[RMDB]
An RNA of 177 nucleotides, treated with DMS and 2A3 and read out base by base. DMS adducts were read by reverse transcription with MarathonRT. The 2A3 profile rests on 6,250 reads.
RNA sequence: GGGAACGACUCGAGUAGAGUCGAAAACGCACACGAAACCAUUAGCACUUAUGACCGUGACAGCACGGUUUCGAGUGGUAGUCUAGCUUUUGCGAUGCACAAUAGCUCAGUUCCAUGCGGAUGACUGAACUAGUGAAUGCUUCGGCAUUCACUAGUUAAAAGAAACAACAACAACAAC
Reactivity to DMS in 0.01 (KOAc 150mM, MgCl2 10mM, bicine 150mM(pH8.5), 24C), signal-to-noise 5, nucleotides 027 to 126: c050g010c030a060c060a070c070g010a060a040a030c120c090a100u000u010a050g030c010a020c030u000u010a000u020g000a030c040c020g020u000g000a200c300a170g010c050a030c010g010g020u000u000u010c080g010a010g040u000g000g000u020a020g010u000c040u030a040g010c040u000u000u010u000g010c060g000a090u020g000c040a050c080a030a050u000a050g010c020u000c030a050g000u000u000c020c040a070u000g010c060g010g010a080u020g010a080c020u000g010
Reactivity to 2A3 in 0.01 (KOAc 150mM, MgCl2 10mM, bicine 150mM(pH8.5), 24C), signal-to-noise 2, nucleotides 027 to 126: c010g010c000a010c000a020c030g050a040a030a000c020c000a070u010u030a030g030c000a000c000u020u010a000u070g030a010c000c000g000u000g030a070c060a050g130c000a030c010g000g000u010u000u000c020g000a030g000u010g010g040u020a010g000u000c010u010a010g000c000u030u010u010u030g030c030g030a010u020g000c010a020c020a030a030u030a020g000c010u000c020a010g000u000u000c040c020a020u060g000c010g020g070a040u020g020a020c010u030g000